[RMDB]
RNA sequence: GGGAACGACUCGAGUAGAGUCGAAAACUUGCAACCGCUGGUGAAUAGCCGCCCGCUGUGGCUGGGGAGUUCUUGUUCCUUAUUGCAUAGCCCAAUUGAUUUAAGUGAAGAAACGCGUCUUGAUGCCAGCUGGAGAGAAAUUCGUUUCUCUCCAGCUAAAAGAAACAACAACAACAAC
Reactivity to 2A3 in 0.01 (KOAc 150mM, MgCl2 10mM, bicine 150mM(pH8.5), 24C), signal-to-noise 1, nucleotides 027 to 126: c000u080u060g010c000a030a080c000c010g000c010u020g010g010u060g050a200a130u070a210g090c030c010g000c030c070c000g000c080u080g020u090g100g000c010u030g000g000g000g030a050g000u030u040c040u040u050g030u020u030c090c000u050u090a190u080u160g050c030a090u060a100g030c000c000c000a060a100u040u100g090a090u010u080u230a120a090g050u100g110a120a030g070a070a160a000c050g020c020g060u010c050u080u080g070a090u100g040c000c070
Reactivity to DMS in 0.01 (KOAc 150mM, MgCl2 10mM, bicine 150mM(pH8.5), 24C), signal-to-noise 2, nucleotides 027 to 126: c060u000u010g000c060a100a080c050c080g000c050u010g010g010u000g010a120a100u000a120g000c040c040g010c040c040c050g010c120u000g020u000g000g010c000u000g000g010g010g010a090g010u000u000c110u010u020g010u000u000c010c000u000u020a090u000u000g010c100a030u000a100g020c020c020c030a070a120u010u000g000a110u000u000u000a060a100g030u000g010a080a100g000a060a060a080c080g010c060g030u000c040u000u000g010a120u010g020c050c120